[RMDB]
RNA sequence: GGGAACGACUCGAGUAGAGUCGAAAAGAUAUGGAGUUCCGUGGUGACAUGCUGGGCUCGGAAACGAGCUGGCCAGCAACAGCACCCGGAACUCCUAAGUCAAAACACGGUUGUUCGCAACCGUGAAGCUACUUCCUAACUUCGGUUAGGAAGUAGCAAAAGAAACAACAACAACAAC
Reactivity to DMS in 0.01 (KOAc 150mM, MgCl2 10mM, bicine 150mM(pH8.5), 24C), signal-to-noise 2, nucleotides 027 to 126: g030a020u010a210u000g020g000a000g000u000u000c000c000g030u000g030g000u000g020a200c150a220u000g010c000u000g010g020g000c000u000c000g000g000a030a030a110c000g020a000g030c000u010g020g060c050c020a000g000c000a030a150c300a190g020c000a020c000c000c000g000g000a010a000c000u000c000c000u000a010a080g000u000c040a100a090a140a300c010a000c010g000g010u000u000g000u000u030c240g000c020a000a020c010c000g010u000g010a020a090
Reactivity to 2A3 in 0.01 (KOAc 150mM, MgCl2 10mM, bicine 150mM(pH8.5), 24C), signal-to-noise 2, nucleotides 027 to 126: g000a000u020a000u080g000g000a000g000u000u000c010c010g090u300g030g000u040g020a290c130a300u050g010c000u000g010g000g000c000u000c020g010g020a030a030a000c000g000a010g000c020u070g090g170c020c010a000g250c010a030a030c080a030g300c000a000c000c000c000g000g000a000a000c000u000c000c010u000a000a000g000u000c000a030a040a030a060c010a010c000g000g040u000u020g040u130u110c300g030c210a020a010c000c030g000u000g000a010a000

An RNA of 177 nucleotides, treated with DMS and 2A3 and read out base by base. DMS adducts were read by reverse transcription with MarathonRT. In probing experiments dimethyl sulfate is read out at A N1 and C N3, which are open when not base-paired. The 2A3 profile rests on 3,419 reads.